[RMDB]
RNA sequence: GGGAACGACUCGAGUAGAGUCGAAAACCGCCCCUGCGCCCCUCCCCCUGCCUACAACUUGAUCUUAUUUGAUCGGGUAGUGGCCCCAGCCUGCCCGGCAGACCCGAGAUGAAAAGCUCUCCUCCUGGACCUACCAUUUAUUCGUAAAUGGUAGGUCAAAAGAAACAACAACAACAAC
Reactivity to 2A3 in 0.01 (KOAc 150mM, MgCl2 10mM, bicine 150mM(pH8.5), 24C), signal-to-noise 4, nucleotides 027 to 126: c000c000g010c010c000c000c000u040g020c030g000c010c000c000c010u000c010c000c000c000c000u020g010c000c010u070a050c030a100a040c020u040u080g010a010u010c020u050u240a220u240u240u240g020a020u020c010g000g020g000u040a070g030u060g050g010c010c000c020c000a010g020c000c000u030g000c000c000c000g020g000c010a020g040a040c000c000c040g010a020g000a050u120g070a060a050a020a020g010c010u010c000u000c030c000u010c000c010u020g060
Reactivity to DMS in 0.01 (KOAc 150mM, MgCl2 10mM, bicine 150mM(pH8.5), 24C), signal-to-noise 3, nucleotides 027 to 126: c020c000g020c030c030c030c000u000g020c050g020c020c030c030c030u000c010c020c020c020c020u000g020c020c030u030a040c060a060a050c020u000u000g010a030u010c010u000u010a150u020u050u020g010a030u000c000g010g020g010u000a070g040u000g000g010c000c070c020c020a100g000c050c020u000g020c020c010c020g020g020c030a070g010a130c040c020c010g000a080g010a060u020g000a060a060a080a090g000c040u010c010u000c010c020u010c020c030u010g000
Structure probing data (2A3 and DMS) for a 177-nucleotide construct. For DMS the reverse transcriptase was MarathonRT. It was measured as part of the RMDB libraries RFM100 and RFMREP. Conditions: 150 mM KOAc, 10 mM MgCl2 and 150 mM bicine (pH 8.5), 24 C. The 2A3 profile rests on 4,650 reads.